[RMDB]
The data come from the RNA Mapping Database (RMDB), library OK2TRN. This 177-nucleotide RNA was probed chemically with DMS and 2A3.
RNA sequence: GGGAACGACUCGAGUAGAGUCGAAAAAUGGGCUUUAUCGCAUCUGGGCGCAUCCAAUCAUAGACAUAGACGGUGGAGUUAAGAAACUGCAGAAGGUUACACAGAGCCUUAAAGGUGAUAUUAAUUCAAUUGUCGUGUAAUUCGUUACACGACAAUUAAAAGAAACAACAACAACAAC
Reactivity to DMS in 0.01 (KOAc 150mM, MgCl2 10mM, bicine 150mM(pH8.5), 24C), signal-to-noise 5, nucleotides 027 to 126: a110u000g020g000g000c040u000u000u010a050u010c090g020c050a070u010c050u000g010g020g020c090g000c050a070u000c050c030a070a070u010c090a070u000a080g010a080c080a070u000a080g020a080c080g000g010u000g000g010a080g020u000u000a050a090g000a090a100a060c050u010g000c100a140g000a050a040g000g010u010u000a060c100a100c170a070g000a130g000c020c020u000u010a050a090a140g000g010u000g000a070u010a110u000u000a050a120u000u010c090
Reactivity to 2A3 in 0.01 (KOAc 150mM, MgCl2 10mM, bicine 150mM(pH8.5), 24C), signal-to-noise 2, nucleotides 027 to 126: a000u030g040g000g020c000u100u080u060a080u100c030g020c060a010u000c020u050g040g000g000c080g020c050a030u000c020c000a030a020u050c030a080u080a060g070a070c000a020u140a010g040a040c000g000g020u050g040g040a050g000u030u020a080a030g030a070a050a020c030u010g000c020a010g050a220a060g040g030u080u080a010c070a010c000a030g160a020g070c010c000u040u070a070a130a020g000g040u060g030a070u060a080u270u170a110a100u050u050c030
Overview: As a SHAPE reagent, 2A3 marks flexible, mostly unpaired nucleotides at the ribose 2'-OH. The RNA was probed in 150 mM KOAc, 10 mM MgCl2 and 150 mM bicine (pH 8.5) at 24 C.